Chemical mapping of a 177-nucleotide RNA with DMS and 2A3. Values cover nucleotides 27 to 126. For 2A3, 900 sequencing reads were counted. The RNA was probed in 150 mM KOAc, 10 mM MgCl2 and 150 mM bicine (pH 8.5) at 24 C. For 2A3 the reverse transcriptase was SuperScript II with manganese. For DMS, 1,201 sequencing reads were counted.
[RMDB]
RNA sequence: GGGAACGACUCGAGUAGAGUCGAAAAAUCGAACUUCACGCUUCUGUUGGAGAAAGAUCUAUGAAGCUUAUGACAAAUGUUCCAAUAGUUCGUGCCUUCAACAUGGCGGAAAAUAGUUUGGAACGAAUCCGUAAAUGGCAUUCGUGCCAUUUACGGAAAAAGAAACAACAACAACAAC
Reactivity to DMS in 0.01 (KOAc 150mM, MgCl2 10mM, bicine 150mM(pH8.5), 24C), signal-to-noise 2, nucleotides 027 to 126: a120u010c050g020a050a070c030u000u000c110a090c150g040c050u000u000c170u000g000u000u000g030g000a030g040a150a090a260g020a060u020c030u010a100u010g010a030a040g000c030u000u020a060u000g000a060c190a060a040a050u030g010u020u000c000c020a020a060u000a040g010u000u000c000g030u000g000c100c000u010u020c150a060a040c220a070u000g000g020c000g040g000a080a010a050a150u000a030g030u000u000u000g000g000a090a070c030g000a030a060
Reactivity to 2A3 in 0.01 (KOAc 150mM, MgCl2 10mM, bicine 150mM(pH8.5), 24C), signal-to-noise 1, nucleotides 027 to 126: a010u080c010g000a010a000c020u020u020c040a050c080g000c010u040u000c040u110g100u140u090g000g000a020g040a080a140a000g090a080u020c040u040a100u090g060a020a020g000c000u100u140a070u160g050a020c080a020a120a050u180g040u050u000c040c000a040a050u050a020g020u020u010c030g110u150g020c000c000u030u030c000a060a060c020a140u100g000g000c000g020g040a150a030a000a000u080a030g010u010u000u090g030g000a030a050c020g060a050a090